Conditions: 150 mM KOAc, 10 mM MgCl2 and 150 mM bicine (pH 8.5), 24 C. This 177-nucleotide RNA was probed chemically with 2A3. The 2A3 profile rests on 907 reads.
RNA sequence: GGGAACGACUCGAGUAGAGUCGAAAAGUUCAACCCGUAACACCAGCUCUACGCACUCGCUUUGAAGCCCUGUUCGGUGGUGGAAGCUUCGAACUCGUCGGAACAAUGAACAAAGGACUCAUAGACAGGUACGCUGAGGAUUCGUCCUCAGCGUACCAAAAGAAACAACAACAACAAC
Reactivity to 2A3 in 0.01 (KOAc 150mM, MgCl2 10mM, bicine 150mM(pH8.5), 24C), signal-to-noise 2, nucleotides 027 to 126: g000u010u100c010a140a150c000c000c140g000u140a050a000c070a000c060c000a050g000c030u000c000u030a000c110g020c000a000c000u030c000g060c020u150u170u100g060a050a010g000c000c000c060u100g000u140u030c070g020g030u080g040g000u060g040g000a040a000g030c000u000u090c000g000a080a060c030u020c100g010u010c000g020g070a090a050c020a010a180u080g010a090a030c040a090a170a050g060g050a040c020u010c070a050u120a000g110a070c070a050